[RMDB]
RNA sequence: GGGAACGACUCGAGUAGAGUCGAAAAUCGAACUCUCUCGUGAACACACUCGAUCACACGAUCGUGUACGUACACACGUGUGAGAGUGAUCUCACGUGUUCUCACACUCGUGUGUUCACUCGAGUGUACGAACGUGAGAGUACACGUUCACACGAGACCGUAUAGGAACUUUCGAGUUCCUAUACGGAAAAGAAACAACAACAACAAC
Reactivity to DMS in 0.01 (KOAc 150mM, MgCl2 10mM, bicine 150mM(pH8.5), 24C), signal-to-noise 3, nucleotides 027 to 156: u010c050g010a070a110c050u000c020u010c020u000c030g020u000g020a140a050c090a150c000a040c090u000c020g030a200u000c020a050c040a070c030g010a030u000c050g030u000g020u000a060c270g000u010a120c050a020c000a060c010g050u000g020u000g010a070g010a070g020u030g000a090u000c010u000c000a010c000g010u000g020u000u000c050u020c070a050c020a080c030u000c050g000u000g030u010g010u000u010c070a070c060u010c020g000a060g000u010g010u000a090c080g000a090a050c010g020u000g010a080g000a190g010u000a040c050a040c040g010u000u000c010a280c000a060c060g000a170g000a180
Reactivity to 2A3 in 0.01 (KOAc 150mM, MgCl2 10mM, bicine 150mM(pH8.5), 24C), signal-to-noise 9, nucleotides 027 to 156: u140c020g020a030a020c010u020c000u000c000u000c060g010u020g110a140a020c050a000c000a000c070u010c010g080a100u090c010a010c000a000c020g040a130u200c180g010u020g010u060a150c170g130u230a020c010a000c000a010c040g020u020g020u020g030a040g000a010g040u110g060a070u010c000u010c000a000c010g020u020g050u050u040c070u020c020a000c000a030c010u010c010g000u010g000u010g050u160u140c090a070c060u020c020g000a010g000u000g010u020a040c070g000a020a000c000g000u010g010a060g010a010g040u040a010c020a000c010g020u020u030c030a030c000a010c090g020a010g050a040